This 177-nucleotide RNA was probed chemically with DMS. For DMS the reverse transcriptase was MarathonRT. Conditions: 150 mM KOAc, 10 mM MgCl2 and 150 mM bicine (pH 8.5), 24 C. For DMS, 8,629 sequencing reads were counted. Values cover nucleotides 27 to 126.

RNA sequence: GGGAACGACUCGAGUAGAGUCGAAAAGAUAUGGAUGAGAGGUUGAGCUCCACACUAGCUUUGAUCUAACGGGAUCGGAAACGAUCUUUAGGGAGCUAGGUGGAGCUCAACCUCUCAUCCUAAGUCAGCCAUAUUUAUAGUUCGCUAUAAAUAUGGCAAAAGAAACAACAACAACAAC
Reactivity to DMS in 0.01 (KOAc 150mM, MgCl2 10mM, bicine 150mM(pH8.5), 24C), signal-to-noise 6, nucleotides 027 to 126: g020a070u000a300u000g000g000a010u000g010a010g010a000g020g010u000u010g000a030g010c000u000c000c000a010c010a190c010u000a010g010c010u010u000u020g010a100u010c010u000a030a080c300g010g000g000a010u000c000g000g000a130a120a280c010g010a010u000c000u000u000u000a030g010g010g000a000g020c000u000a000g020g020u000g000g010a000g000c000u000c000a000a000c010c000u000c010u000c000a000u000c000c000u000a010a060g010u000c040a150